RNA sequence: GGGAACGACUCGAGUAGAGUCGAAAACAUUUCCAGUGGCCUGUCUGCCUCGUCCACCUGUGUAUUGAGUCACCUCAAAAUCUUACACAUCCAAAAGCUGAACUUAUGAUUGUGUUGCUUCAACUUGUUCCUCUUGAUGAACCCAGUGUCUGGGAAAUAUUUUAGGAGCAUUCGUGCUCCUAAAAUAAAAAGAAACAACAACAACAAC
Reactivity to DMS in 0.01 (KOAc 150mM, MgCl2 10mM, bicine 150mM(pH8.5), 24C), signal-to-noise 2, nucleotides 027 to 156: c040a130u000u000u000c000c010a160g030u000g020g000c000c040u000g020u000c020u000g010c020c030u010c040g010u000c040c030a060c040c020u030g040u010g000u010a080u000u030g010a140g010u010c050a140c070c060u040c050a070a060a110a100u010c070u020u010a080c050a020c060a070u020c040c060a050a030a110a120g000c040u000g010a060a230c090u010u000a080u030g010a130u010u020g030u000g000u000u000g010c010u020u010c050a070a180c100u000u000g000u000u000c010c020u010c040u010u000g030a140u010g000a050a160c010c020c010a020g000u020g020u000c060u000g020g000g020a060a050a130
Reactivity to 2A3 in 0.01 (KOAc 150mM, MgCl2 10mM, bicine 150mM(pH8.5), 24C), signal-to-noise 1, nucleotides 027 to 156: c020a020u060u040u090c000c020a020g020u000g110g010c000c000u020g010u080c000u030g000c000c030u020c030g060u000c010c040a010c020c020u060g000u010g000u080a110u050u090g020a010g050u130c050a060c060c050u030c000a050a160a030a030u000c030u040u100a000c040a010c000a080u030c010c040a160a050a070a030g070c090u090g030a040a060c020u130u130a040u300g050a240u030u090g010u010g020u070u040g030c010u080u030c020a090a060c080u060u070g020u040u030c000c030u060c020u090u060g020a030u130g070a080a090c010c010c000a040g070u110g070u230c070u040g020g040g000a040a100a050
An RNA of 207 nucleotides, treated with DMS and 2A3 and read out base by base. The RNA was probed in 150 mM KOAc, 10 mM MgCl2 and 150 mM bicine (pH 8.5) at 24 C. DMS adducts were read by reverse transcription with MarathonRT. 2A3 adducts were read by reverse transcription with SuperScript II with manganese.